[RMDB]
The data come from the RNA Mapping Database (RMDB), library RFMREP. Chemical mapping of a 177-nucleotide RNA with 2A3 and DMS. DMS adducts were read by reverse transcription with MarathonRT. For 2A3, 9,166 sequencing reads were counted. Conditions: 150 mM KOAc, 10 mM MgCl2 and 150 mM bicine (pH 8.5), 24 C.
RNA sequence: GGGAACGACUCGAGUAGAGUCGAAAAUCUAUGUGUACCUUCGGGUACACAUAGAAAAUAUUUUACUGUCCAAAGGAGUCAAUUAAUUAGCGCCUAAAAGCGAGAAAUGUGUUCGCACAUUUCUCGCGCUACAUCUUGUGUUCGCACAAGAUGUAGCAAAAGAAACAACAACAACAAC
Reactivity to 2A3 in 0.01 (KOAc 150mM, MgCl2 10mM, bicine 150mM(pH8.5), 24C), signal-to-noise 2, nucleotides 027 to 126: u000c000u000a000u000g000u010g000u000a010c010c000u030u050c240g060g000g000u000a000c000a000c000a000u000a000g000a000a000a000a010u020a010u000u090u020u060a090c040u040g060u020c030c000a110a080a060g040g020a050g040u060c060a060a080u060u170a060a080u080u100a130g040c040g040c040c000u100a140a140a040a020g000c000g000a010g000a000a000a000u010g020u010g020u050u070c220g000c090a000c010a000u000u010u010c000u000c000g000c010
Reactivity to DMS in 0.01 (KOAc 150mM, MgCl2 10mM, bicine 150mM(pH8.5), 24C), signal-to-noise 4, nucleotides 027 to 126: u000c000u000a000u000g010u000g010u000a010c000c000u000u020c210g040g000g020u010a000c000a000c000a000u010a010g000a020a050a060a100u010a060u000u010u000u000a070c120u000g010u000c030c030a080a120a070g000g010a030g020u000c060a070a150u010u000a060a110u000u000a090g010c080g000c010c020u010a040a040a070a140g000c000g000a010g000a010a010a010u000g010u000g010u000u010c220g020c000a000c000a010u010u010u000c000u000c000g010c000